[RMDB]
RNA sequence: GGGAACGACUCGAGUAGAGUCGAAAAUCUAACUGGCUCAGAAGAGCUAGCUGUGCCGCAAUAAAACCACAUGGAGGAGAUAUCCCACUUGAUAAUCUAUUUAUCUGGGCUCGAUUUCUGGCAGGGAAUUCAGGGCAGAAUUCGUUCUGCCCUGAAUAAAAGAAACAACAACAACAAC
Reactivity to 2A3 in 0.01 (KOAc 150mM, MgCl2 10mM, bicine 150mM(pH8.5), 24C), signal-to-noise 4, nucleotides 027 to 126: u030c000u000a040a050c020u020g050g000c010u010c030a120g050a300a010g010a280g050c010u010a010g010c020u060g060u120g030c040c020g020c060a100a080u080a160a140a050a020c030c030a050c000a090u130g030g000a010g000g020a060g020a040u060a060u080c000c000c000a030c020u030u040g020a030u050a070a050u090c160u210a220u120u060u030a010u010c010u030g040g000g000c010u020c050g060a060u000u040u010c000u000g050g000c030a060g030g000g040a030
Reactivity to DMS in 0.01 (KOAc 150mM, MgCl2 10mM, bicine 150mM(pH8.5), 24C), signal-to-noise 4, nucleotides 027 to 126: u010c050u000a080a170c050u020g010g020c000u010c000a110g020a120a130g010a030g000c000u010a010g020c030u000g010u020g000c000c020g000c130a060a070u030a040a040a120a150c050c040a040c080a060u000g010g000a050g020g000a200g010a090u010a090u030c000c020c030a070c140u000u010g000a020u000a020a060u020c180u020a090u030u000u000a020u010c020u020g000g010g010c060u000c040g000a160u020u000u020c040u000g000g000c060a030g000g000g020a070